RNA sequence: GGGAACGACUCGAGUAGAGUCGAAAACGCCACCACACAGAAUUCGUUUCGCAUACUGGGCGAGGCCAUUCUGUCCUCCGGGGAGGGACGCAUCACCCCGAAUGGGAAUGGCAACGCAAUGUCUGGACAGUACUACGGUGUUCGCACCGUAGUACUGAAAAGAAACAACAACAACAAC
Reactivity to 2A3 in 0.01 (KOAc 150mM, MgCl2 10mM, bicine 150mM(pH8.5), 24C), signal-to-noise 3, nucleotides 027 to 126: c040g030c010c010a020c030c010a010c010a000c000a010g090a040a100u110u100c050g060u040u040u020c040g000c090a040u060a200c090u200g040g140g000c010g010a010g040g000c010c000a000u000u010c000u040g120u110c000c010u040c030c010g000g000g000g030a090g020g100g050a050c100g080c130a150u120c020a090c000c030c010c010g030a050a050u150g040g000g010a010a020u010g010g000c010a020a000c000g000c040a040a100u160g050u040c000u010g030g000a010
Reactivity to DMS in 0.01 (KOAc 150mM, MgCl2 10mM, bicine 150mM(pH8.5), 24C), signal-to-noise 2, nucleotides 027 to 126: c120g000c050c020a060c040c030a100c150a110c030a030g010a090a080u010u020c180g020u000u010u020c040g000c030a090u000a100c170u010g010g030g000c000g000a060g020g020c000c010a000u000u000c000u000g000u000c110c060u000c060c010g010g020g010g000a190g000g010g020a080c230g030c080a100u000c030a170c030c000c010c020g000a050a030u010g010g020g000a020a020u000g010g010c040a010a010c020g000c090a120a060u010g000u010c030u000g010g010a300